[RMDB]
RNA sequence: GGGAACGACUCGAGUAGAGUCGAAAAAAGCUGAGCCUCAUGCUGUAGGUCUUUUAGUCUUAUAUAUCUUUUUCCUCCAUUGCUCAGAAUGGUCAUGUAACUGAUUUGGAUUGGUGAUAUUACCAUCCACCGCGGUAUAGUUCGCUAUACCGCGGUGAAAAGAAACAACAACAACAAC
Reactivity to 2A3 in 0.01 (KOAc 150mM, MgCl2 10mM, bicine 150mM(pH8.5), 24C), signal-to-noise 1, nucleotides 027 to 126: a000a020g120c060u050g010a010g000c000c000u010c020a040u170g020c030u160g030u160a010g010g030u090c040u000u100u100u140a040g030u010c000u110u060a180u030a040u000a090u220c070u000u030u000u020u010c000c000u010c070c010a030u020u070g040c000u010c030a010g020a030a110u040g000g040u050c040a120u140g010u060a050a040c030u050g050a040u090u080u090g140g120a050u020u140g020g020u020g030a010u070a040u270u050a050c020c020a010u000c050
Reactivity to DMS in 0.01 (KOAc 150mM, MgCl2 10mM, bicine 150mM(pH8.5), 24C), signal-to-noise 1, nucleotides 027 to 126: a060a040g020c060u000g010a060g000c040c040u010c090a120u010g030c120u000g010u010a050g000g000u000c010u000u000u010u020a080g000u000c010u000u000a120u020a110u000a080u000c020u000u000u000u010u000c010c010u000c050c030a030u000u010g010c040u000c040a100g000a070a010u000g000g000u000c090a050u000g000u000a070a180c070u010g020a020u000u000u020g000g010a040u010u010g000g000u000g020a110u000a080u000u000a050c020c000a070u000c040